RNA sequence: GGGAACGACUCGAGUAGAGUCGAAAAAGCGGCGACAUGCUGACACGGCUGACUCGCGACAUCGGACAAAUCGAGGUGUUUUUCGCCCACACCACCGCGCCGGUGAUCUCUGCUGCUGUGGUGCCGCCAUGAGCCGAGCAUUCGUGCUCGGCUCAUGAAAAGAAACAACAACAACAAC
Reactivity to DMS in 0.01 (KOAc 150mM, MgCl2 10mM, bicine 150mM(pH8.5), 24C), signal-to-noise 1, nucleotides 027 to 126: a130g000c070g000g000c020g000a090c070a080u000g000c050u000g000a160c050a020c040g010g000c020u000g000a230c010u000c060g230c090g010a020c060a010u000c030g020g020a120c100a070a040a120u000c030g000a080g000g170u000g030u000u000u000u000u000c160g000c070c000c090a140c130a040c080c010a050c040c040g010c150g020c000c010g010g020u000g000a060u000c000u020c050u000g000c020u000g000c040u010g000u000g000g000u000g000c000c030g000c030
Reactivity to 2A3 in 0.01 (KOAc 150mM, MgCl2 10mM, bicine 150mM(pH8.5), 24C), signal-to-noise 1, nucleotides 027 to 126: a020g000c020g040g020c000g060a080c050a180u200g050c090u100g090a000c010a000c040g000g000c010u030g040a270c010u030c140g120c050g020a010c020a010u010c040g040g000a020c050a060a070a120u100c040g060a080g020g070u050g030u060u010u020u060u100c050g020c000c020c010a010c000a000c000c000a010c000c080g070c020g070c060c060g000g030u100g190a300u000c030u000c030u000g000c020u030g000c000u000g040u010g050g030u030g030c000c020g000c000
An RNA of 177 nucleotides, treated with DMS and 2A3 and read out base by base. Source: RMDB library OK2TST, as collected in RNAgym. For 2A3 the reverse transcriptase was SuperScript II with manganese. 2A3 is a SHAPE reagent: it acylates the 2'-hydroxyl of flexible nucleotides of all four kinds. The reactions ran in a buffer of 150 mM KOAc, 10 mM MgCl2 and 150 mM bicine (pH 8.5), at 24 C.